[RMDB]
RNA sequence: GGGAACGACUCGAGUAGAGUCGAAAACUUGUUCGGGAGCUCGCUGAUGGCGCACAUGCCCCCGCCGGGCCCCGUCCACGCCUGGCCCUCGCGCAGGCACGCGUCCACGGCGUCGGCCGUCAGGGCGUCAGGCUGUCUUAUUCGUAAGACAGCCUGAAAAAGAAACAACAACAACAAC
Reactivity to 2A3 in 0.01 (KOAc 150mM, MgCl2 10mM, bicine 150mM(pH8.5), 24C), signal-to-noise 2, nucleotides 027 to 126: c000u080u180g000u050u010c000g020g020g000a150g040c010u010c020g050c020u060g010a220u140g080g030c040g020c010a140c030a300u300g000c000c010c010c030c010g080c130c010g000g020g010c000c030c010c000g000u000c000c030a070c070g050c000c000u080g100g000c000c000c050u070c030g040c000g000c020a000g030g000c020a010c050g060c000g010u000c010c010a010c000g030g020c020g080u220c070g160g000c030c000g040u050c030a070g000g020g000c000g020
Reactivity to DMS in 0.01 (KOAc 150mM, MgCl2 10mM, bicine 150mM(pH8.5), 24C), signal-to-noise 3, nucleotides 027 to 126: c080u000u000g000u000u010c000g000g000g020a180g040c010u000c020g030c050u010g000a130u010g020g020c080g010c210a080c230a130u020g030c010c010c050c100c060g000c300c030g000g000g000c010c020c010c020g010u000c020c020a060c150g000c010c010u010g000g010c020c040c070u000c150g020c050g010c030a060g000g010c040a060c170g020c020g020u000c020c010a070c030g000g000c000g030u010c190g000g020c010c010g020u010c120a090g040g000g010c000g010
The record gives the reactivity of an RNA of 177 nucleotides to 2A3 and DMS. It was measured as part of the RMDB library OK2TST. 2A3 adducts were read by reverse transcription with SuperScript II with manganese. For DMS, 2,361 sequencing reads were counted. The reactions ran in a buffer of 150 mM KOAc, 10 mM MgCl2 and 150 mM bicine (pH 8.5), at 24 C.